Structure probing data (2A3) for a 207-nucleotide construct. Reactivities are given for positions 27 through 156. For 2A3 the reverse transcriptase was SuperScript II with manganese. Source: RMDB library OK3TST, as collected in RNAgym. Conditions: 150 mM KOAc, 10 mM MgCl2 and 150 mM bicine (pH 8.5), 24 C.
[RMDB]
RNA sequence: GGGAACGACUCGAGUAGAGUCGAAAAACGACAUCCACAUUUAGGAGCACAGAUGGGUUAUUUCCUGCAGGACAACCCGAACCCCAACACCGGGCAGUUCGGCUGGCCGCGGACGAAGGUCUCCGGCGUCAUCGGCGUCCACACCGCCGAAAACAACAGAGGUGAAAUACUUCGGUAUUUCACCUCUAAAAGAAACAACAACAACAAC
Reactivity to 2A3 in 0.01 (KOAc 150mM, MgCl2 10mM, bicine 150mM(pH8.5), 24C), signal-to-noise 1, nucleotides 027 to 156: a010c060g090a020c030a120u030c030c020a040c000a030u060u130u130a090g030g010a010g000c060a030c030a090g110a070u170g050g010g020u080u040a140u050u060u070c010c040u120g050c060a060g000g070a030c000a040a020c030c000c000g000a010a000c000c020c000c020a100a070c080a140c180c100g010g010g030c030a050g020u040u050c000g030g000c020u020g050g020c010c030g000c030g070g000a020c070g020a050a010g140g020u000c010u000c000c050g010g000c020g000u020c020a030u040c010g010g010c000g000u060c070c000a030c040a020c060c000g000c000c020g040a050a100a010a040c110a000a030c030